[RMDB]
RNA sequence: GGGAACGACUCGAGUAGAGUCGAAAAGGUUAGGGGAUGGUUUCAGGAUGGGACUGUUAACAGCUCAGAUCAUCAGGUAUUAGAUUCUCAUGAGGAGCCUGCACAGCCUAGAUCCCUCGCAUACAUAAGUGUGUUACCUGUUCGCAGGUAACACACUAAAAGAAACAACAACAACAAC
Reactivity to 2A3 in 0.01 (KOAc 150mM, MgCl2 10mM, bicine 150mM(pH8.5), 24C), signal-to-noise 2, nucleotides 027 to 126: g060g000u110u050a040g050g000g010g030a020u030g050g030u020u110u090c070a000g000g040a040u050g040g010g060a160c030u050g060u060u150a100a030c000a030g020c000u010c040a020g030a240u020c000a020u000c000a010g060g000u100a110u140u150a070g130a180u110u020c030u000c030a020u010g010a000g020g020a020g030c000c000u040g000c060a030c010a020g000c020c000u020a040g000a050u030c020c030c070u050c020g050c020a120u160a210c030a050u170a150
Reactivity to DMS in 0.01 (KOAc 150mM, MgCl2 10mM, bicine 150mM(pH8.5), 24C), signal-to-noise 3, nucleotides 027 to 126: g010g010u010u000a140g030g010g020g010a120u010g010g010u000u000u000c100a170g020g010a090u000g010g020g000a080c060u020g020u000u000a050a080c130a070g000c030u010c050a090g010a160u010c090a050u000c130a030g030g030u000a090u000u000a130g010a130u000u000c010u000c150a090u000g000a130g020g010a020g000c050c020u000g000c170a040c040a040g000c030c030u000a060g010a130u010c010c020c000u000c120g020c110a140u030a040c180a100u000a070
Structure probing data (2A3 and DMS) for a 177-nucleotide construct. The RNA was probed in 150 mM KOAc, 10 mM MgCl2 and 150 mM bicine (pH 8.5) at 24 C. It was measured as part of the RMDB library OK2TRN.